Overview: Conditions: 150 mM KOAc, 10 mM MgCl2 and 150 mM bicine (pH 8.5), 24 C. Structure probing data (2A3 and DMS) for a 177-nucleotide construct. Source: RMDB library OK1LIB, as collected in RNAgym. For 2A3 the reverse transcriptase was SuperScript II with manganese.
[RMDB]
RNA sequence: GGGAACGACUCGAGUAGAGUCGAAAAUCAGCUCCGCCAGCAGCCAGACCUGACAUCCUCUCCUCGAUGAUGCAGAGCAACCUCACUGGUCUGGGUACAAUUACAGUGGCAGCUGCUCCGCCACCUACAUGACCACCCGAUUCGUCGGGUGGUCAUGAAAAGAAACAACAACAACAAC
Reactivity to 2A3 in 0.01 (KOAc 150mM, MgCl2 10mM, bicine 150mM(pH8.5), 24C), signal-to-noise 2, nucleotides 027 to 126: u140c010a000g000c030u030c040c020g040c000c010a010g010c010a010g030c060c000a030g000a050c000c010u060g040a090c010a050u070c050c000u070c020u040c050c080u060c050g100a110u190g000a000u030g030c080a010g000a030g070c030a030a000c030c070u070c050a050c040u050g030g010u010c040u020g000g000g070u070a000c080a050a150u200u060a100c020a080g020u000g030g010c000a030g000c000u030g000c010u060c010c000g040c020c010a060c000c020u030a070
Reactivity to DMS in 0.01 (KOAc 150mM, MgCl2 10mM, bicine 150mM(pH8.5), 24C), signal-to-noise 1, nucleotides 027 to 126: u010c010a180g000c000u000c000c010g040c070c000a080g000c050a030g030c010c020a000g050a010c070c010u010g000a210c110a130u020c020c000u060c040u000c040c070u000c110g000a170u010g000a070u000g000c080a070g000a000g020c130a090a130c070c000u000c060a300c000u010g020g000u000c000u000g000g000g000u050a100c110a160a150u030u040a120c160a080g030u010g000g030c110a020g000c010u000g000c020u000c070c030g000c000c010a080c000c020u000a160